This 207-nucleotide RNA was probed chemically with DMS and 2A3.

[RMDB]
RNA sequence: GGGAACGACUCGAGUAGAGUCGAAAAAAGAAACAUUGUUUAUGCAAAGGCACUUCGCAAUGUGUGCUCAAACAUUGCUUAUUCAAACACGCUUCAGAAUGUGCGACAAAGAAACAUUGUUAUAAGAUCCACUAAGUCGCCUUCGGGCGACUUAGAACACUAGUUAAAAGUUCGCUUUUAACUAGUGAAAAGAAACAACAACAACAAC
Reactivity to DMS in 0.01 (KOAc 150mM, MgCl2 10mM, bicine 150mM(pH8.5), 24C), signal-to-noise 2, nucleotides 027 to 156: a170a170g000a100a060a040c000a050u000u000g070u020u000u000a050u020g000c070a100a090a070g040g020c010a020c020u000u000c070g060c080a070a040u000g020u020g030u000g010c070u000c070a060a080a030c060a090u010u000g010c090u000u000a070u000u000c040a070a110a100c020a020c040g010c090u000u010c190a160g000a070a020u000g020u000g060c020g000a170c090a040a060a080g010a070a030a020c010a020u000u010g040u000u000a090u000a050a040g010a180u010c030c040a160c010u000a020a010g000u000c020g000c000c010u000u000c300g050g050g040c000g000a010c000u000u000a000g000a050a100
Reactivity to 2A3 in 0.01 (KOAc 150mM, MgCl2 10mM, bicine 150mM(pH8.5), 24C), signal-to-noise 5, nucleotides 027 to 156: a010a000g130a010a050a000c030a020u050u030g010u030u060u060a100u130g050c080a070a090a070g130g000c020a020c020u060u060c050g020c040a010a020u030g020u010g040u070g040c060u080c150a070a100a010c020a040u000u040g010c020u070u080a080u080u130c060a020a100a040c050a030c090g080c070u120u130c060a070g020a160a050u130g050u020g040c010g040a060c100a050a170a020g090a030a060a010c010a010u000u040g010u010u050a120u030a200a040g030a070u010c020c000a020c050u000a000a000g000u000c000g000c010c010u020u050c080g040g000g000c000g020a000c000u000u000a000g000a000a000
The RNA was probed in 150 mM KOAc, 10 mM MgCl2 and 150 mM bicine (pH 8.5) at 24 C.